The record gives the reactivity of an RNA of 177 nucleotides to 2A3 and DMS. The 2A3 profile rests on 9,017 reads. The DMS profile rests on 7,947 reads. For 2A3 the reverse transcriptase was SuperScript II with manganese. It was measured as part of the RMDB library OK2TRN. For DMS the reverse transcriptase was MarathonRT.
[RMDB]
RNA sequence: GGGAACGACUCGAGUAGAGUCGAAAAGAUCCUGAUCACGGUACCGAUCCAUGACGUACCUCAUGCUAGGAUCGAUCAUACUAGUCGUACACUAGUGAUCACUAGGUACAGCGCGUACGCCAUGCGCAAUCACCUACGGAUUCGUCCGUAGGUGAUUAAAAGAAACAACAACAACAAC
Reactivity to 2A3 in 0.01 (KOAc 150mM, MgCl2 10mM, bicine 150mM(pH8.5), 24C), signal-to-noise 6, nucleotides 027 to 126: g040a070u040c000c010u020g030a030u060c030a020c110g080g050u100a070c040c050g020a050u020c040c060a060u070g050a050c040g000u020a040c010c010u040c070a080u160g050c020u050a030g000g030a110u030c070g010a030u020c030a070u050a100c020u020a010g050u060c130g110u120a050c110a020c130u010a020g010u020g020a040u040c030a010c080u030a020g050g030u070a050c050a040g010c040g020c020g040u020a040c060g020c050c020a050u100g020c030g010c050
Reactivity to DMS in 0.01 (KOAc 150mM, MgCl2 10mM, bicine 150mM(pH8.5), 24C), signal-to-noise 7, nucleotides 027 to 126: g010a090u000c000c010u000g010a040u000c050a120c150g020g010u000a040c110c060g010a060u000c080c050a050u000g010a100c180g010u000a020c020c030u010c120a070u000g010c090u000a050g000g000a030u000c080g000a040u000c070a100u010a100c020u000a010g000u000c240g010u020a120c180a070c000u000a000g010u000g010a040u000c040a090c070u000a030g000g010u000a080c080a140g000c040g020c100g010u000a040c100g000c110c060a070u010g010c090g020c080